[RMDB]
RNA sequence: GGGAACGACUCGAGUAGAGUCGAAAACGCUCAUCCGCAAGUCAGCUCGUCUGCUUACUUUCCUAUUAAGUAAACGCAUACGUGGUAGGUGUGCCUCCCUACAUUUGGGAUGGCUACAAAGGUGAUGCUAAUCAGUCCUAUUCGUAGGACUGAUUAGAAAAGAAACAACAACAACAAC
Reactivity to 2A3 in 0.01 (KOAc 150mM, MgCl2 10mM, bicine 150mM(pH8.5), 24C), signal-to-noise 9, nucleotides 027 to 126: c050g020c020u020c020a060u040c010c020g040c060a040a030g060u080c020a030g020c010u030c040g070u020c060u040g010c000u020u010a020c000u040u060u080c030c050u100a100u190u160a100a030g030u050a040a080a060c100g010c040a030u030a060c030g030u050g040g050u080a060g020g080u070g030u050g060c000c000u020c010c000c000u100a150c140a300u140u160u100g020g000g000a070u190g040g000c010u030a020c040a030a080a010g060g020u090g020a040u110g030
Reactivity to DMS in 0.01 (KOAc 150mM, MgCl2 10mM, bicine 150mM(pH8.5), 24C), signal-to-noise 9, nucleotides 027 to 126: c120g010c050u020c040a050u010c020c020g010c080a090a100g000u010c060a150g000c040u000c020g000u000c020u020g000c030u010u010a020c030u000u000u010c150c070u020a070u030u030a050a050g000u020a020a040a110c140g020c060a040u010a040c050g020u010g000g010u010a050g000g020u010g000u010g000c000c000u000c010c000c000u000a090c230a130u020u030u000g010g000g000a020u030g020g010c000u010a010c060a040a080a090g010g010u000g010a080u030g010
Source: RMDB library OK1LIB, as collected in RNAgym. This 177-nucleotide RNA was probed chemically with 2A3 and DMS. The DMS profile rests on 37,712 reads. High DMS reactivity at an A or C suggests that its Watson-Crick edge is free. For DMS the reverse transcriptase was MarathonRT.